[RMDB]
RNA sequence: GGGAACGACUCGAGUAGAGUCGAAAACAGAAGCGUACCGAGCGCGCACUAUUUCGGCUUACCUAUCUUCGUGGGUCCGGUUCGAUCCGCGCGGUCAGAAUGUCUCAAUUCGAGUAAUCAAUUGUGCAGUUCUAGCAGCGAGCGGCAGUACCACUGGCACUGCUGCUGGGUUCGCCCAGCAGCAGUGAAAAGAAACAACAACAACAAC
Reactivity to 2A3 in 0.01 (KOAc 150mM, MgCl2 10mM, bicine 150mM(pH8.5), 24C), signal-to-noise 2, nucleotides 027 to 156: c070a020g120a140a030g070c030g030u060a070c020c130g070a060g070c030g000c000g000c030a020c060u100a080u040u050u000c040g030g000c030u030u050a040c010c020u080a110u110c050u080u080c080g050u040g000g050g010u040c030c030g110g000u040u100c040g020a040u010c000c010g000c000g010c010g040g060u070c010a010g010a060a040u040g120u030c020u000c080a030a030u090u110c100g010a020g030u150a020a240u050c040a010a050u030u040g010u020g000c030a080g040u020u010c020u040a080g010c030a010g010c010g070a040g020c000g030g020c030a040g020u020a030c020c020a040c100u030g050g010